[RMDB]
RNA sequence: GGGAACGACUCGAGUAGAGUCGAAAAGAUAUGGACCCUGGAGGCUUUUGACGAUCUAGUGUUCGGAAACGAACACGGAUCGAUAAGCCUCAGGGUCCUAAGUCAAAGCGAAUCUUCGGAUUCGCAACCUUUAGCGAAAGUUCGCUUUCGCUAAAGGAAAAGAAACAACAACAACAAC
Reactivity to DMS in 0.01 (KOAc 150mM, MgCl2 10mM, bicine 150mM(pH8.5), 24C), signal-to-noise 3, nucleotides 027 to 126: g000a030u000a300u010g000g000a010c000c000c000u000g030g060a050g020g000c000u010u000u000u000g020a300c170g000a010u000c000u000a150g050u000g000u010u000c000g030g010a100a120a210c000g000a020a000c000a000c000g000g000a000u000c010g030a060u000a020a010g020c010c000u000c000a000g000g000g010u000c000c000u020a010a060g000u010c030a090a140a180g010c000g010a030a010u000c000u000u010c250g030g000a030u010u000c000g010c010a010a030
Reactivity to 2A3 in 0.01 (KOAc 150mM, MgCl2 10mM, bicine 150mM(pH8.5), 24C), signal-to-noise 4, nucleotides 027 to 126: g030a010u040a040u150g000g000a010c020c010c030u090g300g200a040g050g000c050u210u210u250u300g260a180c100g000a000u010c010u070a210g000u000g000u000u000c000g020g040a050a080a020c010g000a000a010c010a010c020g000g000a000u000c000g000a000u030a040a010g000c000c000u000c000a010g010g000g000u000c000c000u000a000a010g010u000c020a030a010a080g000c020g010a010a000u000c010u070u140c300g130g010a010u000u030c010g010c010a030a030